[RMDB]
The record gives the reactivity of an RNA of 207 nucleotides to DMS and 2A3. It was measured as part of the RMDB library M2RFPK. DMS adducts were read by reverse transcription with MarathonRT. 2A3 adducts were read by reverse transcription with SuperScript II with manganese.
RNA sequence: GGGAACGACUCGAGUAGAGUCGAAAAACGCGGAGUACGCUCCGCGACAACACUUCUUUCGACCCGCUAACCGAGACCUAUGGGUCGUUAAAUUACGUCUCUAUCUUACUCACAUAACAUCGCACGAAAAACGUGGUUCGGUUCGCCGAACCACGAACGUAUGGUGUAGGUUCGCCUACACCAUACGAAAAGAAACAACAACAACAAC
Reactivity to DMS in 0.01 (KOAc 150mM, MgCl2 10mM, bicine 150mM(pH8.5), 24C), signal-to-noise 1, nucleotides 027 to 156: a060c030g030c060g040g010a020g070u000a060c190g050c080u000c030c010g050c000g030a090c030a070a110c100a120c040u000u010c040u000u000u000c050g020a060c000c030c010g040c050u000a010a120c030c110g030a050g000a080c030c060u000a110u010g010g000g040u010c020g000u010u000a050a060a040u000u000a110c060g000u000c010u000c030u000a050u000c110u000u000a110c050u000c040a020c010a110u030a030a040c020a090u010c080g010c060a110c100g030a060a070a030a100a080c050g030u010g030g040u000u000c000g020g000u000u010c300g030c030c030g000a010a010c010c010a000c000g010a000a030
Reactivity to 2A3 in 0.01 (KOAc 150mM, MgCl2 10mM, bicine 150mM(pH8.5), 24C), signal-to-noise 5, nucleotides 027 to 156: a000c000g000c000g010g000a010g010u030a020c190g050c090u000c000c000g030c020g010a000c000a090a030c030a020c060u140u150c030u060u260u090c020g000a010c010c000c020g030c180u190a020a010c030c030g020a010g010a010c000c000u070a140u240g020g000g000u010c010g040u010u040a010a010a010u150u070a000c010g000u000c000u000c030u030a120u090c050u070u190a110c030u080c080a070c030a140u200a180a060c060a190u160c080g050c130a100c120g140a080a040a040a050a040c010g010u000g010g020u000u000c000g000g030u030u070c190g020c030c000g000a010a010c010c000a000c010g010a000a000